[RMDB]
RNA sequence: GGGAACGACUCGAGUAGAGUCGAAAACGGCGGCGUCACGUUCGGUAACCCGUUCCGCGAGAAGGGUUCAUACGCUGGGGCGGUCGACCCCGGCGGCCGUGGGAUCGCCGAUACCCGCACGGUCGACACCCCGGCCGGUUGGGCCGACUACGUCGACUGUGCCUAACAUAUUCGUAUGUUAGGCACAAAAAGAAACAACAACAACAAC
Reactivity to DMS in 0.01 (KOAc 150mM, MgCl2 10mM, bicine 150mM(pH8.5), 24C), signal-to-noise 2, nucleotides 027 to 156: c020g040g000c000g030g020c110g020u000c030a070c060g010u000u000c050g040g050u010a050a040c040c000c010g000u010u000c040c020g030c220g020a270g030a080a170g010g030g020u000u010c040a100u000a080c040g010c000u010g010g020g000g010c000g020g040u020c100g000a110c010c000c010c010g070g020c010g010g010c080c000g000u000g020g020g020a060u000c020g040c010c010g000a100u000a060c030c010c050g000c070a110c040g000g010u000c000g020a020c010a180c060c120c050c000g010g000c020c010g020g000u000u000g030g010g020c020c000g020a050c050u000a100c100g030u000c000g010a040c030
Reactivity to 2A3 in 0.01 (KOAc 150mM, MgCl2 10mM, bicine 150mM(pH8.5), 24C), signal-to-noise 5, nucleotides 027 to 156: c010g020g000c010g000g020c020g130u180c060a010c050g050u140u110c060g040g060u080a020a020c000c010c010g080u110u020c080c010g120c200g110a170g030a150a040g040g000g010u000u030c040a090u140a160c010g000c020u000g000g000g000g020c090g090g160u210c120g140a300c000c000c000c000g000g000c000g000g020c010c010g000u020g000g020g010a140u010c010g000c000c000g010a000u080a080c000c010c000g020c040a070c050g020g010u000c000g000a000c000a030c020c040c000c000g000g000c010c060g040g020u140u140g080g010g010c000c000g010a020c010u120a020c100g000u010c000g000a000c040
Structure probing data (DMS and 2A3) for a 207-nucleotide construct. The RNA was probed in 150 mM KOAc, 10 mM MgCl2 and 150 mM bicine (pH 8.5) at 24 C. The DMS profile rests on 5,565 reads. For 2A3 the reverse transcriptase was SuperScript II with manganese.